Chemical mapping of a 177-nucleotide RNA with DMS.
RNA sequence: GGGAACGACUCGAGUAGAGUCGAAAACACUGGGGGCCGCUGAGGGUGGGGCAGCCCGGUGCCUGAAGCCCUCUCCUGGCUCCUCUCCCCAGACCUAGGUGUGAGUGCGAGUUCUUUCUUCCCCAGGACACGGUCUUAGAUUCGUCUAAGACCGUGUAAAAGAAACAACAACAACAAC
Reactivity to DMS in 0.01 (KOAc 150mM, MgCl2 10mM, bicine 150mM(pH8.5), 24C), signal-to-noise 2, nucleotides 027 to 126: c060a060c150u010g010g010g000g000g010c020c010g010c050u000g000a030g010g000g030u010g020g020g000g000c020a040g010c040c050c030g000g020u000g000c010c020u010g010a160a300g000c000c000c000u000c000u000c040c010u000g020g010c010u000c000c000u000c050u010c020c010c000c080a150g000a100c120c080u010a080g010g010u000g010u010g000a080g000u000g000c050g010a070g000u010u010c080u000u000u000c070u000u000c030c000c010c150a150g000g020